[RMDB]
RNA sequence: GGGAACGACUCGAGUAGAGUCGAAAAGAUUCUAGGUUCGCCUAGAAUCAAAGAAACCGAAACGAGGGGCGAGCUGCAGCCCCAAUAAAUCAAAUGCAGCAAAAAGAUCUACCUUCGGGUAGAUCAAGCUAAAUAAAGUGUUCGCACUUUAUUUAGCAAAAGAAACAACAACAACAAC
Reactivity to 2A3 in 0.01 (KOAc 150mM, MgCl2 10mM, bicine 150mM(pH8.5), 24C), signal-to-noise 2, nucleotides 027 to 126: g010a000u000u010c010u000a010g000g040u030u010c080g030c030c010u020a010g000a000a000u010c000a020a010a000g020a080a070a010c020c020g040a060a070a020c060g040a200g020g000g000g000c010g000a050g010c000u010g000c000a010g020c020c010c000c000a010a000u010a000a020a000u110c050a000a000a050u090g000c000a000g010c000a000a000a000a010a000g000a000u000c000u010a010c000c000u020u120c250g080g000g000u000a010g000a010u000c000a010a000
Reactivity to DMS in 0.01 (KOAc 150mM, MgCl2 10mM, bicine 150mM(pH8.5), 24C), signal-to-noise 2, nucleotides 027 to 126: g000a010u010u030c000u000a000g020g000u020u010c250g020c030c000u000a000g000a000a010u000c010a010a120a230g000a110a090a300c000c000g010a050a160a130c290g010a090g000g010g000g020c000g010a140g020c020u000g000c010a090g010c000c000c000c000a010a010u000a040a070a040u020c110a020a000a050u010g010c020a010g020c000a030a040a040a050a040g000a020u000c010u000a000c000c010u000u000c170g000g000g010u000a000g000a010u000c000a040a000